[RMDB]
RNA sequence: GGGAACGACUCGAGUAGAGUCGAAAAGCCGGGUGCAUCGGCUAGCGGUAUCACAUGCGUUUCAUUCGUUGCUGAUGGAACCGAUGCUUGCCGAGUUCACGCGGAUCGCUGCCGGUAUUUCGGUGUCUCUUAGCUGACCUUUCGAGGUCAGCUAAGAAAAAGAAACAACAACAACAAC
Reactivity to 2A3 in 0.01 (KOAc 150mM, MgCl2 10mM, bicine 150mM(pH8.5), 24C), signal-to-noise 2, nucleotides 027 to 126: g040c000c000g000g150g000u000g000c050a080u010c030g050g000c010u020a010g000c030g050g110u120a090u160c080a050c050a180u200g030c060g000u030u080u070c060a050u020u070c050g140u120u170g090c070u100g000a020u020g020g010a020a020c000c020g070a070u100g010c020u010u000g010c010c000g000a000g050u080u120c010a000c020g160c020g000g020a050u140c120g050c100u090g000c010c010g060g000u110a280u070u120u130c030g000g010u000g090u000c050
Reactivity to DMS in 0.01 (KOAc 150mM, MgCl2 10mM, bicine 150mM(pH8.5), 24C), signal-to-noise 2, nucleotides 027 to 126: g010c010c000g000g030g020u000g030c290a120u000c000g010g010c010u010a010g020c000g020g000u000a130u010c160a120c220a150u010g000c230g030u000u000u000c030a070u000u000c080g010u000u030g030c240u020g010a030u000g000g000a020a000c000c020g010a090u010g010c020u000u000g000c020c010g010a040g000u000u010c020a020c020g000c000g010g000a100u000c070g010c120u010g010c000c010g000g000u000a050u000u000u010c030g020g010u000g010u000c130
This 177-nucleotide RNA was probed chemically with 2A3 and DMS. Conditions: 150 mM KOAc, 10 mM MgCl2 and 150 mM bicine (pH 8.5), 24 C. For 2A3 the reverse transcriptase was SuperScript II with manganese. For DMS, 1,956 sequencing reads were counted.